Source: RMDB library OK1LIB, as collected in RNAgym. An RNA of 177 nucleotides, treated with 2A3 and DMS and read out base by base. Reactivities are given for positions 27 through 126. The reactions ran in a buffer of 150 mM KOAc, 10 mM MgCl2 and 150 mM bicine (pH 8.5), at 24 C. For DMS, 1,248 sequencing reads were counted. The 2A3 profile rests on 1,704 reads.
RNA sequence: GGGAACGACUCGAGUAGAGUCGAAAACUAGUCUCCGGUGGACCCGCUCUCAGAGGGAGAUUGCCAUACUCAUUUGGCCAAGAAUACUUCCAAUCCUGCAAGCAUAUGAUCUUCGGCAAAGUAUGCAGGGGUAAUGUCUUUUCGAAGACAUUACCCCAAAAGAAACAACAACAACAAC
Reactivity to 2A3 in 0.01 (KOAc 150mM, MgCl2 10mM, bicine 150mM(pH8.5), 24C), signal-to-noise 3, nucleotides 027 to 126: c030u030a020g030u030c010u000c030c010g040g010u020g020g050a050c010c010c000g040c020u080c010u030c060a080g030a080g150g030g000a040g030a030u020u060g000c000c010a040u030a160c050u080c100a160u050u020u130g050g020c000c020a060a000g060a090a100u120a180c030u010u010c030c010a090a100u050c010c020u010g050c030a050a060g010c020a020u030a040u140g070a100u050c000u020u050c030g030g000c040a150a020a000g020u020a050u060g020c010a000
Reactivity to DMS in 0.01 (KOAc 150mM, MgCl2 10mM, bicine 150mM(pH8.5), 24C), signal-to-noise 1, nucleotides 027 to 126: c040u000a120g010u040c060u000c000c000g010g000u000g000g000a030c000c040c020g000c080u040c060u020c020a080g070a070g040g000g000a010g030a070u020u100g010c100c010a000u040a130c170u050c160a050u020u000u000g000g000c080c130a050a170g000a130a060u020a060c060u000u000c040c000a060a220u040c030c000u000g000c020a070a210g040c040a070u000a030u000g000a130u020c030u060u000c120g000g060c040a030a050a150g010u000a020u030g010c160a270